[RMDB]
RNA sequence: GGGAACGACUCGAGUAGAGUCGAAAAAGAAAGAGCAACUUAGGUUUUUAGGCUCCCCGGCGUGUCUCGAACCAUGCCGGGCCAAACCCAUAGGGCUGGCGGUCCCUGUGCGGUCAAAAUUCAAAAAACUAGCAAACUAGUUCGCUAGUUUGCUAGUAAAAGAAACAACAACAACAAC
Reactivity to DMS in 0.01 (KOAc 150mM, MgCl2 10mM, bicine 150mM(pH8.5), 24C), signal-to-noise 2, nucleotides 027 to 126: a080g050a050a070a040g000a040g000c000a040a090c070u000u010a080g010g010u000u000u010u010u040a160g020g010c040u000c010c000c000c010g020g000c000g000u000g020u000c060u000c250g010a110a160c180c000a020u000g010c000c000g010g010g000c020c030a030a120a050c010c000c000a010u000a020g000g020g000c040u000g040g000c070g020g000u010c000c010c000u000g030u000g000c170g010g000u010c080a020a030a020a050u000u010c070a010a070a090a090a070
Reactivity to 2A3 in 0.01 (KOAc 150mM, MgCl2 10mM, bicine 150mM(pH8.5), 24C), signal-to-noise 1, nucleotides 027 to 126: a010g050a000a040a000g010a000g000c010a020a080c020u110u080a070g010g130u050u030u030u100u120a050g030g000c000u010c020c020c000c000g000g000c000g000u020g010u030c070u060c230g020a020a020c020c000a010u010g000c030c000g030g000g000c000c000a010a010a000c000c000c000a010u010a010g040g010g010c020u070g070g080c060g010g000u120c000c000c010u010g020u010g000c060g000g000u020c000a030a020a030a110u090u110c060a030a010a030a050a030
Chemical mapping of a 177-nucleotide RNA with DMS and 2A3. For 2A3, 1,785 sequencing reads were counted. High 2A3 reactivity points to a flexible backbone, as in loops and unpaired stretches.